[RMDB]
RNA sequence: GGGAACGACUCGAGUAGAGUCGAAAAUGCAGCCCUGUUGGAUGCGCAGCAGAGGACCUUUGAUAGUGGUUUCACCGGCCCUGAGGGCCACUACAUCUCCCGACCAGCCGUGUUUGAGGAUGAGGGACCUGAUAGCUCUUUUCGAAGAGCUAUCAGGAAAAGAAACAACAACAACAAC
Reactivity to DMS in 0.01 (KOAc 150mM, MgCl2 10mM, bicine 150mM(pH8.5), 24C), signal-to-noise 2, nucleotides 027 to 126: u000g000c130a100g020c000c020c020u020g050u000u010g010g010a130u000g010c110g000c040a070g020c040a080g000a140g000g020a050c040c020u010u000u000g020a160u010a040g000u010g020g000u000u020u010c050a100c080c050g000g020c000c020c110u000g030a120g040g020g010c000c010a030c040u000a040c090a050u010c060u000c020c000c030g000a110c050c040a090g020c110c120g000u010g020u000u000u020g020a120g010g020a070u010g000a110g010g010g000a190
Reactivity to 2A3 in 0.01 (KOAc 150mM, MgCl2 10mM, bicine 150mM(pH8.5), 24C), signal-to-noise 1, nucleotides 027 to 126: u140g020c060a010g030c000c010c000u010g070u050u020g040g120a130u200g090c040g000c050a030g010c010a000g060a110g120g000a050c030c010u050u080u130g050a090u070a050g030u010g070g040u010u160u140c060a040c080c060g070g020c010c000c000u060g050a120g020g040g000c020c000a010c000u030a020c010a040u030c020u000c030c000c000g000a040c000c020a040g020c060c030g140u110g070u120u090u180g060a050g020g010a020u030g040a100g060g040g000a040
An RNA of 177 nucleotides, treated with DMS and 2A3 and read out base by base. High 2A3 reactivity points to a flexible backbone, as in loops and unpaired stretches. Conditions: 150 mM KOAc, 10 mM MgCl2 and 150 mM bicine (pH 8.5), 24 C. Values cover nucleotides 27 to 126. 2A3 adducts were read by reverse transcription with SuperScript II with manganese.